An RNA of 207 nucleotides, treated with DMS and 2A3 and read out base by base. For 2A3, 1,571 sequencing reads were counted. It was measured as part of the RMDB library M2RFPK.

RNA sequence: GGGAACGACUCGAGUAGAGUCGAAAAGUUCCCUCUUAGUGUGGAGGUUUAACUACGCUCGUUCCCCAUAUCGGUGUGGGCGCACCGGAUUUAUAAAUCAAAGUCCUUUAGGGAACGGAAAGGAACAAAAAUCCAUGGGAGUUCGCUCCCAUGGAAACUUGAACUAUUUGUUCGCAAAUAGUUCAAGAAAAGAAACAACAACAACAAC
Reactivity to DMS in 0.01 (KOAc 150mM, MgCl2 10mM, bicine 150mM(pH8.5), 24C), signal-to-noise 3, nucleotides 027 to 156: g010u010u000c010c000c000u010c060u000u010a070g010u010g010u010g020g000a040g010g030u010u010u000a100a110c020u000a040c020g010c020u000c010g010u000u000c010c000c020c100a210u000a070u000c020g040g040u000g010u010g010g030g010c070g010c010a010c010c000g000g000a160u000u000u010a080u010a090a050a030u000c110a080a090a070g030u010c010c000u000u000u000a090g000g000g020a050a040c030g030g010a070a080a080g010g010a090a110c030a010a080a100a090a190u000c000c000a030u000g010g020g000a050g030u000u010c300g010c010u000c000c010c000a000u010g000g000a000a010a030
Reactivity to 2A3 in 0.01 (KOAc 150mM, MgCl2 10mM, bicine 150mM(pH8.5), 24C), signal-to-noise 2, nucleotides 027 to 156: g010u010u000c000c010c000u020c000u000u100a030g000u030g030u040g020g020a070g030g050u100u160u090a090a050c040u050a020c010g020c030u010c020g000u000u000c020c000c010c000a020u080a050u180c000g010g010u000g000u010g020g000g000c040g000c030a000c000c000g010g000a000u020u250u010a210u140a060a010a000u070c190a020a050a000g040u000c020c000u040u060u140a070g020g010g010a060a010c020g000g040a130a040a020g040g000a040a030c020a080a100a040a000a040u000c000c000a000u000g010g000g000a000g010u060u090c130g050c040u020c010c000c000a000u000g000g000a000a000a000